[RMDB]
RNA sequence: GGGAACGACUCGAGUAGAGUCGAAAACUCUAUAGUUCGCCUACCACUUUGCAGGCUGUCGGUUCAUGCGUUGUAUGCCAUUCACAGACUUCCCUACGCUGUGGGACAUGCAUCCGUAGACCAUUUCAUGCGUAAUGGUUCGCCAUUACGAAAAGAAACAACAACAACAAC
Reactivity to DMS in 0.01 (KOAc 150mM, MgCl2 10mM, bicine 150mM(pH8.5), 24C), signal-to-noise 9, nucleotides 027 to 129: c020u010c070u020a090u020a090g030u020u020c070g000c030c030u040a070c040c050a090c120u040u010u060g020c080a070g010g010c010u000g030u020c100g010g020u030u020c050a040u000g030c070g000u020u010g000u030a010u010g020c040c060a080u030u020c010a000c000a040g010a090c130u020u040c050c030c020u020a090c200g030c010u000g000u000g020g000g000a060c080a010u030g010c030a020u000c080c030g000u010a030g010a040c010c020a090u010u010u000c050a080u060g020
Reactivity to 2A3 in 0.01 (KOAc 150mM, MgCl2 10mM, bicine 150mM(pH8.5), 24C), signal-to-noise 9, nucleotides 027 to 129: c030u020c030u040a070u050a150g100u060u110c040g020c020c010u070a090c030c040a070c070u140u140u170g040c060a030g030g000c030u060g090u070c070g020g010u060u080c060a050u120g030c050g040u020u030g030u040a020u030g010c010c030a110u110u100c010a020c000a020g060a070c020u110u100c030c000c000u030a040c100g000c020u010g000u010g010g010g020a030c010a010u040g000c000a020u020c040c020g020u020a020g040a050c000c010a030u050u120u110c090a080u170g060

An RNA of 170 nucleotides, treated with DMS and 2A3 and read out base by base. The 2A3 profile rests on 110,345 reads.